Chemical mapping of a 177-nucleotide RNA with 2A3 and DMS.
The 2A3 profile rests on 1,405 reads.
RNA sequence: GGGAACGACUCGAGUAGAGUCGAAAAUUCCAGGCCGUGUCAACCGGACGUGGCAGGGAUGACGAACGCGAUGGUUUUUCCGGUUUCUCAUCGCGGCCAACGAAACGGCAGUCGAGCGUCCAACCUGUAGGCUACAGGUUUUCGAACCUGUAGCCUAAAAAGAAACAACAACAACAAC
Reactivity to 2A3 in 0.01 (KOAc 150mM, MgCl2 10mM, bicine 150mM(pH8.5), 24C), signal-to-noise 2, nucleotides 027 to 126: u100u020c030c000a030g100g040c060c020g020u010g010u040c020a030a110c110c050g080g020a010c020g040u050g000g070c030a050g000g040g000a060u090g010a000c010g040a070a010c000g000c010g000a000u010g000g120u040u070u000u120u050c030c000g080g020u040u060u060c060u040c000a030u020c000g000c000g000g010c030c000a040a010c080g050a070a060a020c030g010g000c020a000g060u010c010g000a000g050c010g060u010c000c020a030a030c030c060u080g050
Reactivity to DMS in 0.01 (KOAc 150mM, MgCl2 10mM, bicine 150mM(pH8.5), 24C), signal-to-noise 2, nucleotides 027 to 126: u020u000c000c000a140g020g030c000c050g040u000g030u000c090a160a070c160c200g000g010a070c030g000u000g000g000c040a030g000g010g000a060u040g000a080c000g030a050a070c020g010c010g020a040u000g020g000u020u010u000u020u020c080c000g000g010u000u030u000c160u050c010a000u010c000g020c000g030g020c000c010a130a040c080g000a050a090a050c180g000g030c040a240g000u000c020g020a050g010c030g000u000c020c210a070a180c050c000u010g000
Conditions: 150 mM KOAc, 10 mM MgCl2 and 150 mM bicine (pH 8.5), 24 C.